[RMDB]
RNA sequence: GGGAACGACUCGAGUAGAGUCGAAAAGAUAUGGAACGACCCAACUUGGAUUUAAGCCUACCCACCUUGCUAUCGGAAACGAUAGCAAGAGGGCUUUGUCAGUUGAACAAUAGGUCGUUCCUAAGUCGAUACCAAAUGGGUUCGCCCAUUUGGUAUCAAAAGAAACAACAACAACAAC
Reactivity to 2A3 in 0.01 (KOAc 150mM, MgCl2 10mM, bicine 150mM(pH8.5), 24C), signal-to-noise 3, nucleotides 027 to 126: g030a050u200a120u210g010g000a020a000c000g000a000c050c050c040a010a020c020u090u300g300g040a100u300u300u200a000a010g000c000c020u080a190c160c010c000a030c050c030u000u000g000c000u020a000u000c000g020g030a120a050a110c000g000a020u000a000g000c000a000a000g000a000g000g000g000c000u000u000u010g000u000c030a040g020u020u010g090a300a130c130a300a220u150a220g010g000u000c000g000u000u000c000c000u010a070a010g070u050c070
Reactivity to DMS in 0.01 (KOAc 150mM, MgCl2 10mM, bicine 150mM(pH8.5), 24C), signal-to-noise 2, nucleotides 027 to 126: g010a110u030a260u000g010g000a000a010c020g040a030c010c020c010a010a040c070u000u010g020g040a010u000u000u000a000a010g030c000c010u010a120c050c060c080a300c100c000u010u000g030c000u010a040u000c000g010g020a030a100a190c010g010a010u000a000g010c020a000a000g000a040g020g010g000c010u000u000u020g010u000c000a020g000u010u020g010a070a090c190a130a110u030a080g010g010u010c000g010u000u000c000c000u000a010a090g010u010c160